[RMDB]
RNA sequence: GGGAACGACUCGAGUAGAGUCGAAAAGCUCCUAGUUACGACUAGGAGCAAUAAAUGGUAGACUGAGACCGUCUAACUCAGAUAACCAGAAAUAGACGGAAAACGUAGGAGUUACGACUCCUACGAAUGCCACCUAUAUGUUCGCAUAUAGGUGGCAAAAAGAAACAACAACAACAAC
Reactivity to DMS in 0.01 (KOAc 150mM, MgCl2 10mM, bicine 150mM(pH8.5), 24C), signal-to-noise 2, nucleotides 027 to 126: g000c000u000c000c000u000a000g010u000u010a110c130g040a040c010u000a030g010g000a050g000c010a010a010u000a050a100a040u000g030g030u030a080g000a130c000u000g000a000g000a140c030c000g030u000c010u020a010a150c030u000c030a020g010a030u020a120a190c020c020a060g000a140a000a130u000a030g000a000c000g000g000a280a110a070a110c000g040u000a000g000g000a000g000u000u070a090c220g000a070c000u000c000c000u000a000c000g000a020a060
Reactivity to 2A3 in 0.01 (KOAc 150mM, MgCl2 10mM, bicine 150mM(pH8.5), 24C), signal-to-noise 3, nucleotides 027 to 126: g000c010u000c000c000u000a000g000u030u030a070c250g010a010c200u000a000g010g000a000g010c000a000a000u030a000a050a040u140g120g040u060a080g070a090c020u020g000a000g020a080c000c000g000u000c000u040a260a090c000u000c000a000g010a070u090a050a070c010c010a000g020a020a120a030u000a000g000a010c000g000g030a080a000a000a000c000g000u000a000g000g010a000g010u000u080a100c230g020a000c120u010c000c010u000a000c000g000a000a000
Structure probing data (DMS and 2A3) for a 177-nucleotide construct. As a SHAPE reagent, 2A3 marks flexible, mostly unpaired nucleotides at the ribose 2'-OH. Values cover nucleotides 27 to 126. Reactivities are rounded to 0.1 and cut off at 0 and 3. For DMS, 2,997 sequencing reads were counted.